[RMDB]
RNA sequence: GGGAACGACUCGAGUAGAGUCGAAAAUAAACCAGUCACUAAGAAAUACACUUACUCCUUCUUGCCUAAAGAAGACGGCGAUGUGUUGUUGGCUGAGUUUGACACUUAUGACCCUAUUUAUAAGAAUGUUUAGGUACUACUUCGGUAGUACCUAAACAAAAGAAACAACAACAACAAC
Reactivity to 2A3 in 0.01 (KOAc 150mM, MgCl2 10mM, bicine 150mM(pH8.5), 24C), signal-to-noise 2, nucleotides 027 to 126: u040a000a020a000c010c000a000g010u020c010a000c070u060a140a070g070a040a260a020u130a010c020a000c010u060u210a100c010u020c010c010u030u050c060u000u060g150c020c070u140a060a060a020g040a000a020g040a010c100g000g010c050g030a030u080g000u010g000u070u060g050u060u000g010g000c000u010g010a020g130u000u000u030g050a030c030a010c040u070u050a040u190g040a050c000c030c030u170a190u090u210u020a200u050a010a100g050a130a050u040
Reactivity to DMS in 0.01 (KOAc 150mM, MgCl2 10mM, bicine 150mM(pH8.5), 24C), signal-to-noise 1, nucleotides 027 to 126: u010a020a020a040c010c020a000g020u000c000a020c100u010a040a140g020a110a120a100u020a020c010a000c050u050u000a190c030u000c010c000u000u000c000u030u010g000c200c140u000a070a020a020g000a010a010g000a000c300g000g020c150g030a010u010g020u000g000u000u000g000u010u020g010g000c020u020g000a080g000u000u000u010g030a160c130a100c130u030u010a050u000g010a030c030c020c000u000a200u020u000u020a030u000a060a060g010a100a140u010
Source: RMDB library 15KREP, as collected in RNAgym. This 177-nucleotide RNA was probed chemically with 2A3 and DMS. Reactivities are given for positions 27 through 126. For 2A3, 815 sequencing reads were counted.